[RMDB]
RNA sequence: GGGAACGACUCGAGUAGAGUCGAAAAAAGACGUUUUCGUUCACUUCUCUGCCAUUCAGGGCGCUGGUUUCAAAACUCUGGCAGAAGGCCAGCAAGUUGAAUUCACCAUUGAAAAUGGUGCGAAAGGCCUUAAGCAAAACUUCGGUUUUGCUUAAGGAAAAGAAACAACAACAACAAC
Reactivity to 2A3 in 0.01 (KOAc 150mM, MgCl2 10mM, bicine 150mM(pH8.5), 24C), signal-to-noise 6, nucleotides 027 to 126: a000a000g120a040c050g010u060u040u040u050c030g010u060u070c010a010c040u030u010c020u010c030u060g020c010c010a060u090u070c080a090g050g010g000c010g000c040u030g010g040u010u060u100c050a060a060a030a040c030u040c010u060g020g000c010a030g020a240a010g170g000c000c000a000g000c030a040a020g050u040u030g020a020a020u050u030c010a000c000c000a010u010u060g060a030a000a040a010u030g010g000u020g030c060g070a070a050a020g080g020
Reactivity to DMS in 0.01 (KOAc 150mM, MgCl2 10mM, bicine 150mM(pH8.5), 24C), signal-to-noise 5, nucleotides 027 to 126: a050a030g010a070c090g000u010u010u000u010c030g010u010u010c060a090c060u010u010c060u000c020u010g000c030c020a100u010u010c110a080g000g000g010c120g010c050u000g010g000u000u010u010c080a070a040a060a090c060u010c060u010g020g010c050a160g000a100a080g000g000c000c010a010g010c160a030a120g000u010u000g000a060a050u010u000c010a030c000c000a030u010u000g000a070a060a080a070u000g010g010u000g000c120g010a060a050a090g000g000
An RNA of 177 nucleotides, treated with 2A3 and DMS and read out base by base. The reactions ran in a buffer of 150 mM KOAc, 10 mM MgCl2 and 150 mM bicine (pH 8.5), at 24 C. High DMS reactivity at an A or C suggests that its Watson-Crick edge is free. It was measured as part of the RMDB libraries RFM100 and RFMREP. For 2A3 the reverse transcriptase was SuperScript II with manganese.